[RMDB]
RNA sequence: GGGAACGACUCGAGUAGAGUCGAAAAGUCCACAAUUGUUCGCAAUUGUGGACAAAACCUUUGUGGAAGGACAUGCGGAUUGUUGACCCAUUGGGUCACUGCAAAUCGCAACAGCCUUCCACUCUGGUAAACGACUGUUCCUUUCGAGGAACAGUCGCAAUAGCUGGAGGUUCGCCUCCAGCUAUUGAAAAGAAACAACAACAACAAC
Reactivity to 2A3 in 0.01 (KOAc 150mM, MgCl2 10mM, bicine 150mM(pH8.5), 24C), signal-to-noise 5, nucleotides 027 to 156: g000u000c000c000a000c000a010a010u020u020g030u110u150c250g010c150a000a000u000u000g000u000g000g000a000c000a000a000a000a000c000c000u010u020u010g000u000g010g000a010a000g020g010a060c060a160u030g000c020g030g050a060u010u030g060u030u060g000a010c020c020c150a300u250u300g010g000g000u010c010a010c050u050g020c010a020a020a080u040c010g000c000a040a090c060a150g060c000c000u000u000c000c000a000c000u000c000u000g000g000u030a120a110a010c010g000a000c000u000g000u000u000c010c000u050u050u110c300g110a020g000g000a000a000c000a000g000u000c000g000
Reactivity to DMS in 0.01 (KOAc 150mM, MgCl2 10mM, bicine 150mM(pH8.5), 24C), signal-to-noise 2, nucleotides 027 to 156: g010u000c000c000a020c000a000a010u000u010g000u000u000c300g030c010a010a010u000u000g010u000g010g030a000c000a000a030a090a050c010c020u010u000u000g010u000g000g020a040a020g000g000a040c070a300u010g020c010g040g000a140u000u010g010u000u000g000a020c000c000c000a300u000u010g050g030g030u000c020a020c220u000g030c030a020a040a080u010c010g000c010a030a070c100a160g020c000c010u000u000c000c000a000c010u000c020u000g010g020u000a050a100a140c000g000a010c000u000g010u000u000c000c020u000u000u000c250g000a040g030g020a030a020c000a000g020u000c010g010

Background:
Structure probing data (2A3 and DMS) for a 207-nucleotide construct. The data come from the RNA Mapping Database (RMDB), library RNAMAK. The 2A3 profile rests on 6,560 reads. 2A3 adducts were read by reverse transcription with SuperScript II with manganese.